[RMDB]
The record gives the reactivity of an RNA of 177 nucleotides to 2A3 and DMS. 2A3 adducts were read by reverse transcription with SuperScript II with manganese. The RNA was probed in 150 mM KOAc, 10 mM MgCl2 and 150 mM bicine (pH 8.5) at 24 C. The data come from the RNA Mapping Database (RMDB), library RFMREP.

RNA sequence: GGGAACGACUCGAGUAGAGUCGAAAAGAUGGUGAUUUGGCCCUUUAGUUUUGAGGUUGGUGUACUGUGUGUGAGUACACAUAUUUAUCACACACAGUCACUAUCCUCGAAACUAAGGGUGCACAUCGCUGUUUAAACUCUUCGGAGUUUAAACAGCAAAAGAAACAACAACAACAAC
Reactivity to 2A3 in 0.01 (KOAc 150mM, MgCl2 10mM, bicine 150mM(pH8.5), 24C), signal-to-noise 2, nucleotides 027 to 126: g050a030u170g010g100u120g050a110u070u060u220g100g000c000c010c030u030u040u050a000g000u010u000u010u000g010a000g010g000u030u060g000g010u040g030u090a000c000u000g010u010g000u000g000u000g000a000g090u160a050c090a010c010a130u050a070u130u160u040a060u010c000a010c000a010c000a000c000a010g000u020c000a000c000u010a000u000c000c010u000c000g010a000a000a000c000u000a000a010g000g010g050u050g000c000a000c010a010u030c050
Reactivity to DMS in 0.01 (KOAc 150mM, MgCl2 10mM, bicine 150mM(pH8.5), 24C), signal-to-noise 2, nucleotides 027 to 126: g010a090u010g010g000u000g000a160u010u000u000g000g010c000c010c000u010u000u000a000g010u000u000u000u010g010a010g010g000u010u000g020g020u000g010u010a010c000u010g030u000g010u000g000u000g010a010g020u000a070c300a080c300a110u000a050u000u020u010a120u000c000a000c000a010c010a000c000a010g000u000c000a010c000u000a030u000c000c000u000c000g010a000a000a010c010u000a000a010g000g000g010u010g000c010a030c060a020u010c000